Notes: Structure probing data (DMS and 2A3) for a 177-nucleotide construct. Values are in units of 0.01, from 0 to 300, in steps of 10. The reactions ran in a buffer of 150 mM KOAc, 10 mM MgCl2 and 150 mM bicine (pH 8.5), at 24 C. For DMS, 1,412 sequencing reads were counted. For DMS the reverse transcriptase was MarathonRT.
[RMDB]
RNA sequence: GGGAACGACUCGAGUAGAGUCGAAAAGAUAUGGAAUCCACCGCUCAACAGCUACUGGGUCGGAAACGACCCGUAGACAUGAGCGAUGGAUUCCUAAGUCAAACAGCCCUGGUUCGCCAGGGCUGAAGUUUCUUUUUUGGUUCGCCAAAAAAGAAACAAAAGAAACAACAACAACAAC
Reactivity to DMS in 0.01 (KOAc 150mM, MgCl2 10mM, bicine 150mM(pH8.5), 24C), signal-to-noise 1, nucleotides 027 to 126: g010a050u000a190u000g000g000a010a000u000c000c010a000c010c000g020c010u010c010a060a070c270a180g000c000u000a000c010u050g040g000g000u000c000g000g000a040a010a080c020g010a000c000c000c000g010u000a010g000a010c090a300u010g010a000g010c010g000a010u000g000g000a000u000u000c000c000u000a000a090g000u020c010a140a090a290c000a000g000c000c000c000u010g000g030u000u000c220g040c020c010a010g000g000g010c000u010g010a000a060
Reactivity to 2A3 in 0.01 (KOAc 150mM, MgCl2 10mM, bicine 150mM(pH8.5), 24C), signal-to-noise 1, nucleotides 027 to 126: g000a040u030a040u060g000g010a000a010u030c020c000a000c030c020g090c010u020c100a300a190c110a220g030c000u020a010c190u300g000g000g050u010c020g050g020a030a000a030c020g010a000c010c050c000g000u000a000g000a000c060a300u300g000a000g020c030g020a010u020g000g000a000u010u030c000c000u000a000a000g010u000c030a070a080a160c000a000g000c020c000c000u000g080g000u100u100c300g080c080c000a020g010g000g000c000u000g020a000a000